[RMDB]
RNA sequence: GGGAACGACUCGAGUAGAGUCGAAAAGCGGUGGGGUGUAAUUGGUUAUCAAUGGAAACAGCUGUUUGUUUGCCACACGAGUCACGGUAUAGCCAGCCAAAGAUUCACCGGGAGGCACCCGGCACUGCCACUCUUCCCAUUUCGAUGGGAAGAGUGGAAAAGAAACAACAACAACAAC
Reactivity to DMS in 0.01 (KOAc 150mM, MgCl2 10mM, bicine 150mM(pH8.5), 24C), signal-to-noise 2, nucleotides 027 to 126: g010c030g030g020u030g000g000g000g000u000g000u020a030a090u020u020g000g010u000u030a090u000c060a090a170u020g000g000a030a070a040c150a060g010c180u040g000u020u000u020g040u000u010u000g000c060c000a090c080a040c090g000a100g000u000c070a140c190g000g020u000a050u000a050g050c050c030a080g020c040c050a160a100a130g010a060u010u030c070a110c000c020g000g000g000a140g000g000c110a040c040c000c000g000g070c030a030c000u000g030
Reactivity to 2A3 in 0.01 (KOAc 150mM, MgCl2 10mM, bicine 150mM(pH8.5), 24C), signal-to-noise 3, nucleotides 027 to 126: g030c010g020g020u060g030g020g000g030u000g000u020a090a120u050u100g000g040u070u090a060u170c070a050a130u110g030g030a040a040a030c020a040g080c090u120g130u080u240u120g060u010u060u160g070c040c020a060c040a000c070g040a060g050u140c050a010c130g000g010u120a040u060a080g000c010c000a010g020c020c030a040a000a000g030a020u090u070c040a040c050c000g000g000g000a130g020g090c020a060c080c000c000g000g000c000a040c010u070g010